[RMDB]
RNA sequence: GGGAACGACUCGAGUAGAGUCGAAAACGGGGUCAAAUUGACUCUAGUAGGGAGUCCGUUACUUUAUAGCGACUCCCUAACGGAGUCAGGUUGACUCCCUUAAAAGUGUUGACGUUCGCGUCAACACGCCCUAGUCGACGUUCGCGUCGACUAGGGCAAAAGAAACAACAACAACAAC
Reactivity to 2A3 in 0.01 (KOAc 150mM, MgCl2 10mM, bicine 150mM(pH8.5), 24C), signal-to-noise 1, nucleotides 027 to 126: c040g010g020g000g020u020c000a010a020a000u010u050g000a020c000u000c000u010a050g060u000a020g010g000g000a000g000u110c250c080g010u030u050a080c090u190u300u230a260u160a150g040c020g000a000c000u000c000c000c000u000a020a000c000g000g000a000g000u000c010a000g000g000u000u000g020a000c020u090c000c000c000u100u070a020a110a030a000g000u000g000u000u000g000a000c000g010u050u050c290g020c000g040u000c020a000a000c000a000c020

This 177-nucleotide RNA was probed chemically with 2A3. The reactions ran in a buffer of 150 mM KOAc, 10 mM MgCl2 and 150 mM bicine (pH 8.5), at 24 C. It was measured as part of the RMDB library RFMREP. Reactivities are given for positions 27 through 126.